[RMDB]
An RNA of 177 nucleotides, treated with 2A3 and DMS and read out base by base. For DMS the reverse transcriptase was MarathonRT. The RNA was probed in 150 mM KOAc, 10 mM MgCl2 and 150 mM bicine (pH 8.5) at 24 C.
RNA sequence: GGGAACGACUCGAGUAGAGUCGAAAAUCCCGAAUGGGAUAUCCUGUCCCUUCGGGGACGCUCCCUUACGGGAGCGGGAACGCGGGGAAAGGAAACAUCUGUGUACCCGCAGGAAAAGAAAGCAAACUACCUAUGCUUUAUUCGUAAAGCAUAGGUAAAAAGAAACAACAACAACAAC
Reactivity to 2A3 in 0.01 (KOAc 150mM, MgCl2 10mM, bicine 150mM(pH8.5), 24C), signal-to-noise 8, nucleotides 027 to 126: u020c000c000c000g000a030a070u250g000g000g000a000u010a020u030c010c020u010g020u010c000c000c000u010u010c000g000g000g000g000a000c000g000c000u000c000c000c000u020u120a100c120g000g000g000a010g000c030g000g010g000a080a020c050g000c000g000g020g000g000a040a010a030g020g020a040a300a030c040a160u120c090u150g100u040g000u050a010c000c000c010g000c010a020g070g020a050a090a010a010g140a040a060a010g090c070a070a040a040c040
Reactivity to DMS in 0.01 (KOAc 150mM, MgCl2 10mM, bicine 150mM(pH8.5), 24C), signal-to-noise 6, nucleotides 027 to 126: u010c000c000c000g000a020a020u030g030g000g000a010u010a030u000c040c040u000g000u000c000c000c000u000u000c020g000g000g000g000a010c010g030c030u000c010c000c000u020u060a130c300g040g010g010a020g030c000g010g000g010a150a100c170g020c010g000g000g000g000a080a080a170g010g000a030a120a140c240a100u020c110u040g010u010g010u010a170c010c000c000g020c000a100g010g000a060a060a110a100g000a100a080a070g010c160a090a110a120c160